[RMDB]
Conditions: 150 mM KOAc, 10 mM MgCl2 and 150 mM bicine (pH 8.5), 24 C. This 207-nucleotide RNA was probed chemically with DMS and 2A3. It was measured as part of the RMDB library M2RFPK.

RNA sequence: GGGAACGACUCGAGUAGAGUCGAAAAUGACGUUAAACUGCUGACUCAUACAUACUGACACCGGUUGCUCAACAGGCUGUGUGGGACAAUAGAAUAACAAGGCUGUUAAUUUGAGCUUGACGGCUGCAAAACCUGCAGUACUUCGGUACUGCAGGAAGAUAACUUGGAAGUUCGCUUCCAAGUUAUCAAAAGAAACAACAACAACAAC
Reactivity to DMS in 0.01 (KOAc 150mM, MgCl2 10mM, bicine 150mM(pH8.5), 24C), signal-to-noise 2, nucleotides 027 to 156: u010g010a120c070g000u010u000a070a090a260c040u000g030c030u010g010a130c010u010c020a070u000a080c030a060u010a070c020u000g010a070c070a090c000c030g010g010u000u000g020c010u020c010a060a090c020a040g010g010c030u010g000u000g030u000g000g010g010a110c050a040a070u000a060g030a060a170u000a070a060c040a060a190g040g020c040u000g000u000u000a070a110u000u000u020g010a070g040c060u000u000g010a010c150g010g030c000u020g020c050a050a050a120a150c000c000u000g010c000a030g010u000a010c010u010u010c300g050g010u000a020c010u010g000c010a000g010g010a010a000
Reactivity to 2A3 in 0.01 (KOAc 150mM, MgCl2 10mM, bicine 150mM(pH8.5), 24C), signal-to-noise 6, nucleotides 027 to 156: u090g040a020c070g020u040u040a070a090a030c040u080g010c030u040g050a070c010u020c030a010u050a050c010a020u130a070c040u110g080a050c030a040c090c050g080g000u080u100g010c030u040c040a020a020c000a030g050g000c030u020g010u000g000u020g050g000g020a010c020a030a060u060a080g090a060a060u070a070a020c030a070a030g030g000c010u010g000u020u020a020a040u040u060u100g030a010g020c010u000u010g020a000c010g020g000c010u040g000c040a020a060a050a100c000c000u000g000c000a000g000u000a000c010u020u070c170g090g000u000a000c000u010g000c000a000g000g000a000a000
For DMS, 4,247 sequencing reads were counted. 2A3 adducts were read by reverse transcription with SuperScript II with manganese. In probing experiments dimethyl sulfate is read out at A N1 and C N3, which are open when not base-paired. Reactivities are rounded to 0.1 and cut off at 0 and 3. For DMS the reverse transcriptase was MarathonRT.